The record gives the reactivity of an RNA of 177 nucleotides to DMS and 2A3. For 2A3, 2,711 sequencing reads were counted. Source: RMDB library OK1LIB, as collected in RNAgym. The DMS profile rests on 3,934 reads. For 2A3 the reverse transcriptase was SuperScript II with manganese.
[RMDB]
RNA sequence: GGGAACGACUCGAGUAGAGUCGAAAAGCGAUCAAUAAUAAGUCGACAACUCGAAAGAGUCACAUGGAAACAUGCAUACUAAUGCGUCCAAUGUAGGUCGACGAUUAGGACGCAGAAGAUCGCGAAACCAUCCCAGGAUGUUCGCAUCCUGGGAUGGAAAAGAAACAACAACAACAAC
Reactivity to DMS in 0.01 (KOAc 150mM, MgCl2 10mM, bicine 150mM(pH8.5), 24C), signal-to-noise 3, nucleotides 027 to 126: g000c020g000a000u010c010a140a080u010a060a030u020a040a250g010u000c000g020a000c000a120a020c010u000c000g010a120a040a120g000a030g000u000c110a130c010a010u010g000g010a160a090a110c010a010u000g010c100a040u000a030c100u020a100a050u000g010c020g000u010c000c050a040a070u030g000u020a040g000g000u000c010g000a010c000g020a050u000u000a100g020g000a010c000g020c010a170g000a110a070g000a020u000c040g000c000g010a130a100a160
Reactivity to 2A3 in 0.01 (KOAc 150mM, MgCl2 10mM, bicine 150mM(pH8.5), 24C), signal-to-noise 3, nucleotides 027 to 126: g020c010g000a000u010c010a020a050u160a170a010u080a120a040g040u000c000g000a000c000a060a000c010u000c020g050a050a100a000g000a010g010u020c030a010c010a030u010g010g030a020a070a010c000a010u020g050c000a040u120a150c030u100a160a020u080g000c010g000u000c000c010a010a060u090g010u050a050g000g040u030c010g010a020c000g000a000u000u040a020g010g000a000c010g000c000a010g020a020a010g010a000u000c000g000c020g000a010a010a010